[RMDB]
RNA sequence: GGGAACGACUCGAGUAGAGUCGAAAACGUCGCGUGUUCGCACGCGACGAAACGAGAAACGGCAAAUAAGCCGAACCCAGGCGAUCGUACGCCAUACUCAAAAAAGUCCCUGCUUCGGCAGGGACAAUCAAUACUUCGACUUCGGUCGAAGUAUUGAAAAAGAAACAACAACAACAAC
Reactivity to DMS in 0.01 (KOAc 150mM, MgCl2 10mM, bicine 150mM(pH8.5), 24C), signal-to-noise 1, nucleotides 027 to 126: c000g040u010c000g000c000g020u000g000u010u000c280g040c020a080c010g030c000g020a000c000g000a000a040a080c120g010a150g000a050a200a120c140g000g000c000a100a180a150u010a140a110g000c020c000g000a080a090c000c010c000a300g020g010c010g000a020u000c200g000u000a280c040g000c000c000a120u010a030c030u010c050a020a100a050a040a160a140g000u000c000c000c000u000g000c010u000u030c160g040g000c000a010g070g000g000a000c000a010a010
Reactivity to 2A3 in 0.01 (KOAc 150mM, MgCl2 10mM, bicine 150mM(pH8.5), 24C), signal-to-noise 2, nucleotides 027 to 126: c000g000u010c000g000c010g010u060g030u080u050c130g000c100a010c000g020c040g000a000c000g010a000a000a010c050g010a020g050a030a120a000c010g010g000c040a100a180a300u230a270a060g000c000c000g020a040a030c020c000c000a020g000g000c000g010a050u120c120g090u200a070c000g020c000c000a060u100a080c010u100c100a020a100a040a040a020a010g010u000c000c000c000u010g030c010u030u030c150g100g000c000a000g000g000g000a000c000a000a000

An RNA of 177 nucleotides, treated with DMS and 2A3 and read out base by base. For DMS, 834 sequencing reads were counted. The RNA was probed in 150 mM KOAc, 10 mM MgCl2 and 150 mM bicine (pH 8.5) at 24 C. Reactivities are given for positions 27 through 126. For 2A3, 1,701 sequencing reads were counted. For DMS the reverse transcriptase was MarathonRT. Source: RMDB library M2PK50, as collected in RNAgym.